[RMDB]
RNA sequence: GGGAACGACUCGAGUAGAGUCGAAAAGUGUGCUUCGGCACACCCACACCGUAGGAAUAUCGGAUGGCGAGGAUCGUACGUAACAUCAGCUUCGAAAGAGGCUGUGGUACGGGAGCCAGAAGAUAUUCCUAAACGGGAUUGCUGGAUUCGUCCAGAAAAACCUCAUGAUAUUCGUAUCAUGAGGUUUAAAAGAAACAACAACAACAAC
Reactivity to 2A3 in 0.01 (KOAc 150mM, MgCl2 10mM, bicine 150mM(pH8.5), 24C), signal-to-noise 4, nucleotides 027 to 156: g010u010g000u010g000c010u040u150c300g100g020c010a000c000a010c000c020c000a100c030a030c010c010g010u010a020g000g000a000a010u000a000u010c010g000g020a030u010g020g000c030g040a280g010g020a030u010c000g000u020a000c010g090u130a070a130c040a150u270c010a050g000c000u010u020c010g100a120a060a070g010a010g010g010c010u010g000u020g020g010u010a000c000g000g020g000a000g000c010c000a000g000a010a000g000a000u010a000u000u000c000c000u000a000a000a000c000g000g000g050a120u100u300g060c000u010g000g010a030u070u080c210g040u050c070c010a020g000a080a040
Reactivity to DMS in 0.01 (KOAc 150mM, MgCl2 10mM, bicine 150mM(pH8.5), 24C), signal-to-noise 4, nucleotides 027 to 156: g010u000g040u010g010c010u000u000c300g080g030c000a030c000a020c000c040c060a130c080a110c010c000g000u000a050g010g010a050a030u000a020u010c000g020g010a300u000g020g000c010g020a150g020g010a110u000c060g000u000a030c000g050u010a100a090c080a060u000c020a020g010c010u000u000c000g010a190a140a300g000a040g020g020c000u000g020u000g010g020u000a010c010g000g020g010a300g020c010c000a030g000a300a190g010a020u000a000u000u000c010c000u000a000a010a050c070g010g020g000a130u000u000g000c010u000g000g000a210u000u000c110g020u000c000c020a230g010a040a080